[RMDB]
RNA sequence: GGGAACGACUCGAGUAGAGUCGAAAAGAUAUGGAACGGAGAUGCUAGAAGAAUAUCGGAAACGAUAUUACUUCUUGGACCAUCCCGUUCCUAAGUCAAAAUCAUUGUAACUUCGGUUACAAUGAAACAAUGACAGAAUCUUCGGAUUCUGUCAUUGAAAAGAAACAACAACAACAAC
Reactivity to DMS in 0.01 (KOAc 150mM, MgCl2 10mM, bicine 150mM(pH8.5), 24C), signal-to-noise 5, nucleotides 027 to 126: g000a020u010a300u020g000g000a010a000c010g000g000a140g010a020u010g020c100u000a040g010a010a010g000a080a010u010a000u000c000g020g000a100a060a150c010g020a020u000a000u000u000a120c000u000u000c000u010u010g030g000a100c300c010a020u000c000c000c000g000u000u000c000c000u000a000a060g010u000c040a090a130a120a160u000c000a000u010u000g000u000a010a000c010u000u020c250g040g000u000u000a000c000a010a000u000g020a030a080a160
Reactivity to 2A3 in 0.01 (KOAc 150mM, MgCl2 10mM, bicine 150mM(pH8.5), 24C), signal-to-noise 2, nucleotides 027 to 126: g010a010u040a010u110g000g000a010a000c000g020g010a300g000a290u020g030c140u200a080g010a020a000g000a010a010u010a000u000c000g000g030a090a010a010c040g010a010u000a000u020u030a300c010u000u010c000u030u120g090g090a030c000c040a000u000c000c000c000g000u010u000c000c000u000a020a000g010u010c020a080a020a010a260u020c000a000u000u030g000u010a020a010c010u040u090c300g100g010u010u010a000c020a010a000u010g000a010a000a010
An RNA of 177 nucleotides, treated with DMS and 2A3 and read out base by base. Reactivities are given for positions 27 through 126. For 2A3, 6,966 sequencing reads were counted. For DMS, 4,674 sequencing reads were counted. The reactions ran in a buffer of 150 mM KOAc, 10 mM MgCl2 and 150 mM bicine (pH 8.5), at 24 C. Source: RMDB library TTRDES, as collected in RNAgym.